Chemical mapping of a 177-nucleotide RNA with 2A3. Conditions: 150 mM KOAc, 10 mM MgCl2 and 150 mM bicine (pH 8.5), 24 C. The data come from the RNA Mapping Database (RMDB), library OK1LIB.
[RMDB]
RNA sequence: GGGAACGACUCGAGUAGAGUCGAAAAAGCCGUGGCACCGACGCCAUUACCACCAAUUGCGUUGCCGCUGCUGCCGCUGCUGUGAGGAUUUCCAAAAUCAAAGUCGGUACCAACCUGAACAUUAUCACCUGGUCCCUAGCUUCGGCUAGGGACCAGGAAAAGAAACAACAACAACAAC
Reactivity to 2A3 in 0.01 (KOAc 150mM, MgCl2 10mM, bicine 150mM(pH8.5), 24C), signal-to-noise 1, nucleotides 027 to 126: a000g000c040c040g030u000g010g000c000a000c010c010g060a000c020g020c020c020a050u080u090a170c100c010a050c000c040a000a000u000u100g070c030g000u000u130g100c020c030g000c010u020g010c000u050g070c000c020g020c000u060g000c000u000g070u010g050a130g000g140a140u110u060u150c000c000a300a110a000a020u250c240a200a000a200g100u100c050g000g060u000a070c030c030a070a020c000c010u050g020a030a000c000a090u080u220a070u080c070a000